[RMDB]
RNA sequence: GGGAACGACUCGAGUAGAGUCGAAAACGAAACUUCGGUUUCGAUCACGAUAUGGAGCAAUUGUCAGAGUUUGUGGGCGGAUACUCGGAAACGAGUAUCCAAUCCCAUUUGCUCUUGGAUUUAUUGCUCCUAAGUCAGCGUCAUACUUCGGUAUGAAGAAUGCACUUACGUUCGCGUAAGUGCAUUCAAAAGAAACAACAACAACAAC
Reactivity to DMS in 0.01 (KOAc 150mM, MgCl2 10mM, bicine 150mM(pH8.5), 24C), signal-to-noise 2, nucleotides 027 to 156: c020g000a080a040a000c010u000u000c260g040g010u010u000u000c010g000a100u000c040a110c050g010a090u000a270u000g020g000a030g050c000a020a060u000u000g020u000c010a040g000a040g030u000u000u000g030u000g000g070g140c300g000g010a000u000a000c020u000c010g010g010a140a070a180c000g010a040g020u000a000u010c010c000a000a030u010c000c010c010a000u000u000u000g010c010u000c010u000u000g040g020a050u000u010u000a040u000u000g000c010u000c000c000u000a000a100g010u000c030a130g000c090g020u000c010a000u010a000c010u000u010c220g030g010u000a010u010g000a040a120
Reactivity to 2A3 in 0.01 (KOAc 150mM, MgCl2 10mM, bicine 150mM(pH8.5), 24C), signal-to-noise 3, nucleotides 027 to 156: c010g010a010a000a010c030u100u120c280g090g020u000u020u020c030g010a080u170c120a020c120g030a030u030a020u210g010g000a010g000c010a000a000u010u010g020u020c010a010g010a000g000u000u030u080g030u010g000g030g020c050g000g000a000u010a000c000u000c000g020g020a070a100a020c010g000a000g000u000a000u000c000c000a000a020u050c000c000c000a000u030u010u030g010c010u010c000u010u070g040g000a020u120u190u140a020u000u130g000c000u000c000c000u000a010a000g020u020c030a020g100c030g130u040c000a000u000a020c020u080u070c260g100g000u020a010u050g020a020a080